[RMDB]
RNA sequence: GGGAACGACUCGAGUAGAGUCGAAAACCGUAGGCUGGGCACUCUCUCCGAACUACGUUCGGGUAGGCUUCGAAAGAGGCCUAUCUCUAGCGUGACGCGGAGAGUUGCCAGCAGCCUAAACGGAAAAGGACUAAACAUGUUCGCAUGUUUAGUCCAAGGCAAUCAUUUUGUUCGCAAAAUGAUUGCCAAAAGAAACAACAACAACAAC
Reactivity to 2A3 in 0.01 (KOAc 150mM, MgCl2 10mM, bicine 150mM(pH8.5), 24C), signal-to-noise 1, nucleotides 027 to 156: c010c000g000u010a000g010g020c010u030g040g000g000c000a030c020u240c000u000c000u000c040c000g060a110a030c050u030a000c010g000u020u010c060g000g010g000u010a000g020g000c020u010u000c050g160a160a080a020g010a010g010g020c010c010u000a000u030c060u000c000u020a010g000c010g000u010g000a010c090g000c000g050g000a010g000a000g000u000u000g010c000c000a060g110c000a000g000c000c000u020a130a110a020c030g050g040a040a050a100a150g040g020a000c000u010a000a010a000c000a000u010g000u060u080c240g000c180a020u000g000u000u050u000a000g000u010c000c000a010a000